[RMDB]
RNA sequence: GGGAACGACUCGAGUAGAGUCGAAAAUUGUGGUCAAGACCUUGGCGUAGUAUCCAAGGUUGUCAAGGUUCCUAUUGUCUUAACAAUGAUUGAGUUUAUGUUAUGGUGUAAGGAUGGACAGGGGAAACUGACGUAGUGUAUUCGUACACUACGUCAGAAAAGAAACAACAACAACAAC
Reactivity to 2A3 in 0.01 (KOAc 150mM, MgCl2 10mM, bicine 150mM(pH8.5), 24C), signal-to-noise 3, nucleotides 027 to 126: u050u040g050u060g030g020u080c040a080a030g010a040c000c000u000u000g000g000c070g060u120a030g040u040a110u000c000c000a000a000g000g000u000u010g020u020c000a020a030g110g010u020u030c000c000u020a080u020u100g030u030c030u040u080a060a030c040a050a120u100g070a130u090u160g060a110g300u080u070u050a090u100g060u050u030a050u090g010g010u030g020u030a080a060g030g020a020u060g020g000a000c040a050g000g000g000g020a060a030a040
Reactivity to DMS in 0.01 (KOAc 150mM, MgCl2 10mM, bicine 150mM(pH8.5), 24C), signal-to-noise 6, nucleotides 027 to 126: u010u010g010u010g010g010u010c100a110a120g010a020c000c000u000u000g000g000c270g010u000a150g030u010a150u000c000c000a020a010g000g000u000u000g010u000c060a050a080g010g010u000u000c020c020u000a080u010u010g010u000c070u000u000a050a050c040a050a060u000g000a050u000u010g010a130g010u000u010u010a040u020g010u000u000a040u000g010g010u000g010u000a070a060g010g010a080u000g010g010a050c060a080g000g000g000g000a090a080a140

Annotation:
An RNA of 177 nucleotides, treated with 2A3 and DMS and read out base by base. Values are in units of 0.01, from 0 to 300, in steps of 10. For DMS, 9,550 sequencing reads were counted. 2A3 adducts were read by reverse transcription with SuperScript II with manganese. The reactions ran in a buffer of 150 mM KOAc, 10 mM MgCl2 and 150 mM bicine (pH 8.5), at 24 C. DMS adducts were read by reverse transcription with MarathonRT. It was measured as part of the RMDB library M2PK90. Reactivities are given for positions 27 through 126.